An RNA of 207 nucleotides, treated with 2A3 and read out base by base. The data come from the RNA Mapping Database (RMDB), library OK3TST. 2A3 adducts were read by reverse transcription with SuperScript II with manganese. The reactions ran in a buffer of 150 mM KOAc, 10 mM MgCl2 and 150 mM bicine (pH 8.5), at 24 C.
RNA sequence: GGGAACGACUCGAGUAGAGUCGAAAAAAGUUCAGCAGGCGCGCACUGCACGCGGUCUCACCCGCCGAGUACUUCGACACCGUGAUCGUCGACUCGAAGACCCCGCAGGCGGAGGUCGAGGUCCUGCGCGAACGGGGAGCGACGGUGCGGCGGGCCGCAAGGUCGGUAUCUUCGGAUACCGACCUUGAAAAGAAACAACAACAACAAC
Reactivity to 2A3 in 0.01 (KOAc 150mM, MgCl2 10mM, bicine 150mM(pH8.5), 24C), signal-to-noise 1, nucleotides 027 to 156: a000a020g130u110u060c070a050g000c010a010g100g060c050g000c000g010c150a100c150u090g030c040a000c100g300c050g070g020u020c060u000c020a210c020c000c000g000c010c000g020a010g000u010a090c000u020u020c000g030a000c020a050c080c040g040u030g090a200u060c040g110u040c010g100a160c070u030c130g060a090a000g030a100c020c020c000c100g050c020a050g070g030c010g000g040a080g060g000u050c020g010a010g060g000u020c000c040u100g170c000g070c060g000a010a040c020g000g050g000g010a010g040c040g080a080c040g000g000u010g000c000g000g000c000g010g020g000c000c000g000